RNA sequence: GGGAACGACUCGAGUAGAGUCGAAAAGAGUAAAUAGAGGAGUCAGGGUUCGCACCUGCUCCGCGAACCUAGGGUAACACUGACUGUGGAGCGUAAGAGAGAGCAGACGAAGAUACGUCUGCAUAGAAAUCACUCCUAAUUUCGAUUAGGAGUGAUUAAAAGAAACAACAACAACAAC
Reactivity to 2A3 in 0.01 (KOAc 150mM, MgCl2 10mM, bicine 150mM(pH8.5), 24C), signal-to-noise 8, nucleotides 027 to 126: g060a000g060u170a060a070a080u230a060g080a040g110g010a030g010u090c040a040g060g000g000u030u070c020g000c020a070c030c030u040g030c020u000c010c000g000c000g010a010a000c000c030u050a040g070g010g050u060a060a010c040a030c110u060g080a020c020u070g040u100g100g010a010g000c060g040u100a140a000g050a010g010a010g010a010g060c010a000g000a000c010g030a100a080g100a150u130a140c000g010u000c000u000g010c000a000u020a010g030a000
Reactivity to DMS in 0.01 (KOAc 150mM, MgCl2 10mM, bicine 150mM(pH8.5), 24C), signal-to-noise 9, nucleotides 027 to 126: g000a090g010u020a050a070a090u020a100g010a090g000g010a050g020u020c050a070g000g000g000u000u020c060g010c050a120c090c040u010g000c030u000c020c080g020c030g000a030a030c030c020u000a110g010g000g000u010a080a090c100a160c080u000g000a070c070u010g020u020g000g000a050g010c060g000u030a080a100g010a110g000a110g010a110g010c000a000g000a010c010g010a150a130g020a180u030a090c010g010u000c000u000g010c010a030u020a040g010a080